[RMDB]
RNA sequence: GGGAACGACUCGAGUAGAGUCGAAAAGCAACAGUUCCUGGAUAUCCUAAGCUUUUCAUUACUCGUGAAGAGGCUGUAAGGCAAGUUCGAAGCUGGAUAGGCUUCGAUGUUGAGGGUGCUCAUGCUUAAGGGGCAUACUUCGGUAUGCCCAAAAGAAACAACAACAACAAC
Reactivity to DMS in 0.01 (KOAc 150mM, MgCl2 10mM, bicine 150mM(pH8.5), 24C), signal-to-noise 4, nucleotides 027 to 129: g040c040a130a150c190a060g030u010u080c020c020u080g070g000a090u000a000u060c050c010u000a110a090g020c030u000u000u000u000c040a040u000u010a100c150u000c080g000u000g000a090a030g020a050g020g030c100u020g000u000a090a000g040g080c000a070a090g050u000u000c000g000a030a000g020c020u050g000g040a180u030a120g000g000c000u000u010c010g030a030u060g020u030u070g010a150g020g000g030u030g000c030u030c010a080u040g020c090u010u000a070a040g020
Reactivity to 2A3 in 0.01 (KOAc 150mM, MgCl2 10mM, bicine 150mM(pH8.5), 24C), signal-to-noise 7, nucleotides 027 to 129: g000c000a010a060c010a080g010u050u020c000c000u010g040g060a090u030a050u160c030c030u060a070a000g020c000u020u010u000u000c000a010u020u170a170c060u040c100g040u070g080a080a040g010a020g110g000c020u050g030u100a050a040g030g000c060a060a040g070u010u020c000g000a000a000g000c010u040g020g170a210u150a210g030g000c000u000u000c000g000a010u020g060u020u040g040a060g000g000g010u010g000c010u030c030a050u090g010c030u070u050a060a070g030